Structure probing data (DMS) for a 177-nucleotide construct. The RNA was probed in 150 mM KOAc, 10 mM MgCl2 and 150 mM bicine (pH 8.5) at 24 C. DMS adducts were read by reverse transcription with MarathonRT. Reactivities are given for positions 27 through 126.

[RMDB]
RNA sequence: GGGAACGACUCGAGUAGAGUCGAAAAGAUAUGGAUGUGACGGACAUGGUUCUAACACGUAUAGUACAGAUCGGAAACGAUCUGUACUAUACGUGUUAAGAACCAACAGCCGUUCACAUCCUAAGUCCCUGUUGAUUAUCUUCGGAUAAUCAACAGGAAAAGAAACAACAACAACAAC
Reactivity to DMS in 0.01 (KOAc 150mM, MgCl2 10mM, bicine 150mM(pH8.5), 24C), signal-to-noise 2, nucleotides 027 to 126: g030a130u010a200u010g010g010a000u010g030u010g000a010c030g000g000a020c170a300u010g020g000u000u000c000u000a020a020c010a010c010g010u000a010u010a010g010u010a010c000a020g000a030u010c000g020g010a200a060a290c010g010a010u000c020u000g000u000a000c000u000a000u000a000c000g030u000g000u000u010a030a050g000a010a000c010c000a000a030c300a210g000c000c000g000u010u000c000a010c000a010u000c000c000u000a020a090g000u000c060